[RMDB]
RNA sequence: GGGAACGACUCGAGUAGAGUCGAAAAGAAAACCGCAGUUGGCUAGCAGAAAGAAAGAGGAUUAAAGCCAACGAAAUAAGUCGGAAAGCACGACCGACAAGAAAAGCCCUACAAUCGUGCAAGAAAAAUUACUGAGGCUAUUCGUAGCCUCAGUAAUAAAAGAAACAACAACAACAAC
Reactivity to DMS in 0.01 (KOAc 150mM, MgCl2 10mM, bicine 150mM(pH8.5), 24C), signal-to-noise 3, nucleotides 027 to 126: g010a150a070a080a090c110c110g060c170a140g040u010u000g030g030c000u010a110g050c120a150g000a120a140a160g000a120a060a090g010a140g000g030a170u020u020a070a130a050g020c020c000a000a010c000g010a040a090a040u000a020a070g000u000c000g000g010a090a040a100g010c000a000c010g000a070c000c000g000a000c010a050a100g000a030a090a050a040g000c090c040c020u030a050c260a040a020u000c000g010u000g010c010a100a080g000a070a010a090a130
Reactivity to 2A3 in 0.01 (KOAc 150mM, MgCl2 10mM, bicine 150mM(pH8.5), 24C), signal-to-noise 3, nucleotides 027 to 126: g000a010a120a000a010c090c090g040c110a080g000u000u010g020g060c020u060a080g020c080a060g190a130a150a010g230a030a180a000g120a080g100g020a040u130u080a170a050a000g010c000c000a000a000c000g000a000a040a020u210a060a070g000u030c020g000g000a080a210a020g000c000a000c000g000a000c000c000g000a000c020a060a000g070a000a040a010a000g000c000c020c010u090a090c090a000a070u020c010g000u000g000c000a000a000g050a000a040a000a000